[RMDB]
RNA sequence: GGGAACGACUCGAGUAGAGUCGAAAACGACCGGUGCCAGCGCUGAGCAACUGCGCUUGUCCACUCUGGCACUGCUCAGGACGCACUCUAGGCAGCUGGAGGAAGUCACAGAGGCGGGGGUGGAAGACCAGGUGCUCGUAUUCGUACGAGCACCUGGAAAAGAAACAACAACAACAAC
Reactivity to 2A3 in 0.01 (KOAc 150mM, MgCl2 10mM, bicine 150mM(pH8.5), 24C), signal-to-noise 2, nucleotides 027 to 126: c040g000a000c040c000g000g020u000g040c080c000a020g000c090g060c050u050g040a020g150c040a000a140c060u030g020c030g010c050u000u150g020u090c010c000a010c040u010c060u080g000g020c000a010c150u000g010c000u070c000a050g200g000a140c050g060c040a040c010u030c040u060a070g050g000c010a140g070c070u030g000g000a010g050g030a010a010g020u010c030a070c090a100g010a000g000g050c050g050g000g000g010g000u020g000g010a020a040g120a070
Reactivity to DMS in 0.01 (KOAc 150mM, MgCl2 10mM, bicine 150mM(pH8.5), 24C), signal-to-noise 1, nucleotides 027 to 126: c060g000a050c040c000g000g010u000g000c000c000a080g000c050g000c190u030g000a220g000c030a050a000c000u030g000c200g000c240u000u200g000u000c010c030a000c000u050c260u000g000g000c000a000c000u040g000c080u030c010a160g000g000a170c030g050c300a300c030u000c000u000a000g000g160c130a000g000c000u000g120g080a030g000g000a170a300g000u010c000a120c070a140g030a260g010g000c000g000g000g010g000g000u100g000g000a000a160g000a300